[RMDB]
RNA sequence: GGGAACGACUCGAGUAGAGUCGAAAAGAAAGAAAGAAAGCACUCUGUAAAGUGAGGGAUUGCCUGGACCAGGUCGGCGGGCCUGCUCCAGUUUCCUUCGCUCUGCUCAACGGGCAGACCGCCACAAAAAACGCGUGGCUGUUCGCAGCCACGCGAACUAAUCUAUGAAGUUCGCUUCAUAGAUUAGAAAAGAAACAACAACAACAAC
Reactivity to 2A3 in 0.01 (KOAc 150mM, MgCl2 10mM, bicine 150mM(pH8.5), 24C), signal-to-noise 2, nucleotides 027 to 156: g020a010a040a000g050a030a090a010g030a000a070a000g010c000a020c030u070c060u080g050u130a070a020a010g010u010g020a000g000g040g020a080u090u180g110c020c000u000g010g000a010c000c010a000g010g010u050c070g030g100c010g040g000g000c010c000u000g000c010u000c000c000a000g020u020u030u000c000c000u050u090c050g010c010u040c010u020g000c000u010c050a100a130c120g020g010g010c010a010g050a080c060c000g000c030c000a040c030a020a200a000a010a010a020c020g000c000g000u030g000g000c010u000g040u080u090c200g000c130a000g000c020c010a000c120g020c000g000a010a000